[RMDB]
RNA sequence: GGGAACGACUCGAGUAGAGUCGAAAAACACGGAUACGCUCGCUUAGGUUCAUAACUCUAUGGUGAGCAGAUGGUUAGCCAUUGCCCACCGCCUGGCUGUCGAUUGCAGCGAAUGCGGCCUUGCAACCCGGCUUCCGGCACCGCUGACGCGCAGUGAUAUCAUUGAUACGUUCGCGUAUCAAUGAUAAAAAGAAACAACAACAACAAC
Reactivity to DMS in 0.01 (KOAc 150mM, MgCl2 10mM, bicine 150mM(pH8.5), 24C), signal-to-noise 2, nucleotides 027 to 156: a070c060a090c060g000g000a090u000a070c060g000c010u000c040g050c030u010u000a050g020g010u000u000c190a110u000a060a070c070u000c040u010a030u010g020g000u000g010a040g000c000a100g030a040u000g020g000u000u030a100g030c020c030a080u000u000g010c000c020c050a060c010c010g000c020c030u000g010g030c010u000g020u000c050g020a140u010u010g000c040a060g020c000g020a040a090u010g020c050g000g000c040c070u000u010g020c030a050a100c030c020c040g030g020c060u000u000c030c020g000g030c060a060c030c020g000c020u000g000a300c040g020c050g040c080a120g010u000g000a170
Reactivity to 2A3 in 0.01 (KOAc 150mM, MgCl2 10mM, bicine 150mM(pH8.5), 24C), signal-to-noise 4, nucleotides 027 to 156: a000c060a020c020g050g000a070u080a080c060g010c030u010c000g000c020u080u110a020g020g020u070u070c060a130u170a240a060c050u080c030u190a090u190g000g020u000g020a000g000c010a000g020a020u030g010g030u060u120a040g020c040c010a040u020u070g000c010c030c000a020c000c030g000c000c040u010g040g000c010u020g040u060c070g060a110u050u230g030c040a030g010c040g050a080a020u130g010c010g020g010c020c010u020u080g030c030a030a040c020c040c000g010g000c000u110u030c040c000g040g010c020a020c020c030g000c040u050g040a030c040g000c010g000c040a040g020u030g090a030